[RMDB]
RNA sequence: GGGAACGACUCGAGUAGAGUCGAAAAGCGUACUACAAGCGACCCAGAAGAGGUGGGUCUCUAGCGUGAAGAUCCCAAAUAGGAUCUUUCGGGCCCACUACCCACCUUCUGGCAAGCUUGUAUCGCAAAGGCGAGAAGAGUUCGCUCUUCUCGCCAACAAGUGAAGGUUGUUCGCAACCUUCACUUGAAAAGAAACAACAACAACAAC
Reactivity to DMS in 0.01 (KOAc 150mM, MgCl2 10mM, bicine 150mM(pH8.5), 24C), signal-to-noise 2, nucleotides 027 to 156: g010c000g050u000a070c050u000a040c020a050a030g010c020g010a300c300c010c000a020g000a040a040g000a090g010g020u000g000g050g000u000c010u010c060u000a180g040c120g040u000g000a040a010g080a030u000c000c000c010a030a210a170u010a050g000g000a020u010c000u000u000u000c060g000g010g020c000c000c020a020c020u000a020c030c010c040a300c090c000u000u000c000u000g020g000c000a020a300g000c010u000u000g010u000a010u000c000g070c020a050a110a090g020g010c010g000a020g010a030a010g000a050g000u000u030c300g000c010u000c000u000u000c000u000c000g000c000c000a000a050
Reactivity to 2A3 in 0.01 (KOAc 150mM, MgCl2 10mM, bicine 150mM(pH8.5), 24C), signal-to-noise 4, nucleotides 027 to 156: g000c010g030u110a080c050u010a000c050a000a000g000c000g010a040c000c000c000a000g010a000a000g010a010g030g000u020g000g020g020u030c050u000c040u180a100g090c080g130u200g030a000a000g000a010u050c000c030c050a150a300a070u300a100g000g010a000u020c000u000u050u040c020g000g000g000c010c000c000a000c000u000a010c010c030c010a090c000c010u000u010c000u010g000g010c020a010a010g000c000u000u010g000u000a000u040c000g000c010a100a120a020g010g000c000g000a010g000a000a000g020a010g000u070u210c230g120c120u010c010u000u000c000u000c000g000c010c000a000a010
Structure probing data (DMS and 2A3) for a 207-nucleotide construct. It was measured as part of the RMDB library RNAMAK. For DMS the reverse transcriptase was MarathonRT. For 2A3 the reverse transcriptase was SuperScript II with manganese.